Structure probing data (DMS and 2A3) for a 207-nucleotide construct.
RNA sequence: GGGAACGACUCGAGUAGAGUCGAAAAGGGACGCCUUUAGAAGAAGAGGCUAGGUGGUAUUCCGGUGUGGGAUACUUGGUAAUAUGUAACGCUAAUUGAAUAAGAUUGUAGGACGGAAUUUACAGUCAAAACGGUCCUGCGUUCGCGCAGGACCGAACAUUGCUUCUUUGUUCGCAAAGAAGCAAUGAAAAGAAACAACAACAACAAC
Reactivity to DMS in 0.01 (KOAc 150mM, MgCl2 10mM, bicine 150mM(pH8.5), 24C), signal-to-noise 2, nucleotides 027 to 156: g000g000g040a070c110g030c010c010u000u000u000a170g000a150a200g020a160a150g010a080g040g040c020u020a050g020g010u000g000g020u000a090u000u010c020c020g040g010u000g020u000g010g030g020a040u000a030c020u000u000g040g060u010a070a100u000a120u010g010u010a090a100c070g000c030u000a060a130u010u000g010a100a060u000a060a150g000a080u000u010g030u000a070g030g020a150c010g000g030a110a160u000u020u000a040c060a070g010u000c030a070a040a080a170c010g050g040u000c010c000u000g010c000g020u000u000c300g030c030g030c000a070g020g020a000c020c000g010a000a030
Reactivity to 2A3 in 0.01 (KOAc 150mM, MgCl2 10mM, bicine 150mM(pH8.5), 24C), signal-to-noise 5, nucleotides 027 to 156: g020g000g010a030c050g020c010c010u070u070u090a180g040a230a020g030a060a010g020a030g020g020c050u030a030g040g060u040g020g040u050a070u050u020c020c030g050g040u170g020u150g050g010g000a020u010a050c010u040u060g030g000u040a080a080u060a120u220g060u060a080a020c040g010c080u060a070a060u090u110g060a050a060u100a110a030g020a030u020u070g040u030a030g000g070a030c040g020g020a030a010u080u060u070a050c030a020g020u020c000a020a070a050a060c020g000g010u000c000c000u010g000c000g000u020u030c140g010c000g000c060a000g000g000a000c000c000g000a000a000
Annotation
The data come from the RNA Mapping Database (RMDB), library M2RFPK. For DMS, 3,920 sequencing reads were counted. Values cover nucleotides 27 to 156. Conditions: 150 mM KOAc, 10 mM MgCl2 and 150 mM bicine (pH 8.5), 24 C.